An RNA of 177 nucleotides, treated with 2A3 and DMS and read out base by base. 2A3 is a SHAPE reagent: it acylates the 2'-hydroxyl of flexible nucleotides of all four kinds. The RNA was probed in 150 mM KOAc, 10 mM MgCl2 and 150 mM bicine (pH 8.5) at 24 C.

RNA sequence: GGGAACGACUCGAGUAGAGUCGAAAAACGCAUCCGGCGGUGUCGCGGAUGAAUUCUGUGUACUGGCUCCCGUCGAUCGACUGCCAGCGCCCAGCGGUGUGGUCGUGCGGCUUUUUGGCGACCUGCCGCCAUUACGCUGGUUCGCCAGCGUAAUGGCAAAAGAAACAACAACAACAAC
Reactivity to 2A3 in 0.01 (KOAc 150mM, MgCl2 10mM, bicine 150mM(pH8.5), 24C), signal-to-noise 2, nucleotides 027 to 126: a000c020g020c000a030u010c030c040g020g010c020g000g180u080g020u010c050g000c050g070g030a060u140g070a020a000u170u070c030u050g150u010g070u070a070c100u110g060g000c040u080c030c020c010g060u040c020g040a160u030c040g070a010c030u050g090c030c010a000g030c010g040c020c000c000a070g070c050g000g000u090g070u110g050g050u020c020g060u220g300c060g070g000c000u190u110u000u180u300g040g000c010g000a000c000c010u020g010c000c000
Reactivity to DMS in 0.01 (KOAc 150mM, MgCl2 10mM, bicine 150mM(pH8.5), 24C), signal-to-noise 2, nucleotides 027 to 126: a160c280g000c040a070u000c050c050g040g030c020g030g000u010g060u000c030g020c000g010g000a070u020g000a050a070u010u010c010u010g000u010g000u010a100c060u000g010g000c030u010c120c060c070g010u000c070g010a110u010c060g010a110c070u010g000c000c030a050g000c050g030c060c170c060a160g000c040g000g010u000g020u000g030g000u000c010g020u000g010c070g000g000c300u000u000u010u010u010g000g010c020g000a000c040c010u000g000c020c000
Annotation:
Source: RMDB library OK2TRN, as collected in RNAgym. Values cover nucleotides 27 to 126.